[RMDB]
An RNA of 177 nucleotides, treated with 2A3 and read out base by base.
RNA sequence: GGGAACGACUCGAGUAGAGUCGAAAACUUGCGUAUUCUUGAUAAACCAGCGUUUAUAUAUAGAUGUAGGAGGAUCUGUUUGGGAAGUAAGAAGCCCCUUUGACAUCUCUUCAUCUGCAAAUAAUUCCAUUGCGCUGAACUUCGGUUCAGCGCAAUGAAAAGAAACAACAACAACAAC
Reactivity to 2A3 in 0.01 (KOAc 150mM, MgCl2 10mM, bicine 150mM(pH8.5), 24C), signal-to-noise 2, nucleotides 027 to 126: c030u120u190g000c060g080u090a080u220u070c110u050u130g090a050u000a030a090a000c000c000a020g070c000g090u000u080u000a020u000a050u010a000u050a080g060a090u040g070u150a030g040g000a000g070g000a050u040c070u010g170u060u250u110g000g000g010a040a080g030u090a130a080g000a090a000g100c000c000c000c000u020u020u100g030a010c000a090u030c040u000c000u000u040c000a030u000c000u070g000c030a040a160a040u080a000a210u150u000c010